Chemical mapping of a 177-nucleotide RNA with 2A3 and DMS. The reactions ran in a buffer of 150 mM KOAc, 10 mM MgCl2 and 150 mM bicine (pH 8.5), at 24 C.
RNA sequence: GGGAACGACUCGAGUAGAGUCGAAAAGAAAAGAAAGAAAAAGAAAAGAAAAGAAAUGAAAAUUGGUCACGUAGCCCGCAGUGGACGUGACCAAUCUGCGGGCAAAAGAAAAGAAAAGAAAAGAAAAAUAGUAGCUAAUGUUCGCAUUAGCUACUAUAAAAGAAACAACAACAACAAC
Reactivity to 2A3 in 0.01 (KOAc 150mM, MgCl2 10mM, bicine 150mM(pH8.5), 24C), signal-to-noise 2, nucleotides 027 to 126: g000a010a070a000a010g070a040a070a070g120a060a040a020a000a030g040a040a130a030a030g090a040a020a000a040g040a020a080a020u180g010a010a020a010a230u020u040g010g000u000c000a000c010g000u010a040g110c000c020c000g120c140a040g000u120g200g000a000c000g000u000g000a010c000c000a000a000u000c000u040g010c030g030g050g000c000a040a030a000a030g030a010a060a000a000g110a000a080a000a010g040a010a040a000a030g130a000a070a010a000
Reactivity to DMS in 0.01 (KOAc 150mM, MgCl2 10mM, bicine 150mM(pH8.5), 24C), signal-to-noise 2, nucleotides 027 to 126: g000a120a040a080a050g010a080a120a060g010a050a090a100a050a150g040a090a060a050a060g030a070a040a010a070g000a070a060a080u020g000a050a030a130a060u010u000g010g030u010c030a020c010g000u020a120g010c020c000c010g000c100a140g030u040g000g020a030c000g010u010g000a010c010c000a000a000u010c030u010g000c100g040g000g000c070a070a050a060a000g010a060a030a020a090g000a030a040a030a040g000a070a010a040a070g040a030a030a040a060
For DMS, 2,096 sequencing reads were counted.